RNA sequence: GGGAACGACUCGAGUAGAGUCGAAAAGCUCAGGGGUUCGCCCCUGAGCAAAAGAUACCGGUCUCGGUAUCAAAGUCAGUCCGAGAGACCACAGGGAACUGAAAAGGGAGGGGUUCGCCCCUCCCAAGUAAACAUAACUCUUCGGAGUUAUGUUUACAAAAGAAACAACAACAACAAC
Reactivity to DMS in 0.01 (KOAc 150mM, MgCl2 10mM, bicine 150mM(pH8.5), 24C), signal-to-noise 3, nucleotides 027 to 126: g010c010u000c010a010g010g020g010g010u000u010c270g020c010c010c000c020u010g010a000g010c000a000a020a050a100g000a020u000a000c000c000g010g010u010c220u000c010g000g000u000a010u000c010a060a110a110g010u010c050a070g010u000c010c010g000a140g000a130g010a160c020c020a090c100a110g010g010g020a060a050c050u000g000a040a100a070a150g000g000g010a010g000g010g010g020u000u010c170g020c000c000c020c000u000c000c010c000a000a010
Reactivity to 2A3 in 0.01 (KOAc 150mM, MgCl2 10mM, bicine 150mM(pH8.5), 24C), signal-to-noise 2, nucleotides 027 to 126: g010c000u010c000a010g010g030g010g010u030u060c120g130c000c000c000c000u000g000a000g000c000a010a000a000a000g000a000u000a010c010c040g070g140u210c260u110c200g000g000u010a000u010c000a000a000a010g120u070c030a000g000u040c030c020g060a060g000a000g000a130c020c010a020c070a110g020g030g020a060a060c020u030g010a080a060a110a140g000g030g000a000g000g000g010g020u040u080c150g090c020c000c000c010u000c000c000c000a010a000

Structure probing data (DMS and 2A3) for a 177-nucleotide construct. The RNA was probed in 150 mM KOAc, 10 mM MgCl2 and 150 mM bicine (pH 8.5) at 24 C. For 2A3 the reverse transcriptase was SuperScript II with manganese. DMS (dimethyl sulfate) methylates the pairing face of unpaired adenines and cytosines. It was measured as part of the RMDB library M2PK50.